The record gives the reactivity of an RNA of 177 nucleotides to DMS and 2A3. 2A3 adducts were read by reverse transcription with SuperScript II with manganese. DMS adducts were read by reverse transcription with MarathonRT. DMS (dimethyl sulfate) methylates the pairing face of unpaired adenines and cytosines.
RNA sequence: GGGAACGACUCGAGUAGAGUCGAAAACUAUGUACAGACAGUACAGUGGAUAAGGUCUGUCGAUAUCCAACUUAAACAAUGGUACUUGCAGUGGUAUCUAUCAAGAUAGGCAGGCUAUCAUAGAAAGAUGAUGUGUAUUAUUCGUAGUACGCAUCGUAAAAGAAACAACAACAACAAC
Reactivity to DMS in 0.01 (KOAc 150mM, MgCl2 10mM, bicine 150mM(pH8.5), 24C), signal-to-noise 9, nucleotides 027 to 126: c040u010a050u010g010u010a020c020a110g010a100c200a110g000u000a010c020a100g020u020g000g000a080u010a050a080g010g010u010c010u010g010u000c000g010a120u020a020u010c020c060a060a120c160u020u020a030a090a100c200a080a050u010g000g010u000a020c010u000u010g010c130a110g010u030g010g010u000a010u000c000u000a100u040c200a090a070g010a030u000a040g000g000c010a010g000g010c090u000a020u000c030a060u010a070g010a080a090a070g010
Reactivity to 2A3 in 0.01 (KOAc 150mM, MgCl2 10mM, bicine 150mM(pH8.5), 24C), signal-to-noise 9, nucleotides 027 to 126: c010u020a030u050g010u000a010c020a070g200a030c020a020g040u010a000c000a020g030u060g090g010a060u040a110a050g030g000u000c000u000g000u000c000g050a030u010a020u030c010c010a030a030c060u080u120a040a020a010c040a060a080u120g000g000u010a000c000u010u090g100c050a050g030u050g080g000u010a010u000c010u010a090u060c060a040a010g000a020u010a010g010g000c010a000g000g000c010u020a010u030c010a020u020a050g110a040a070a010g100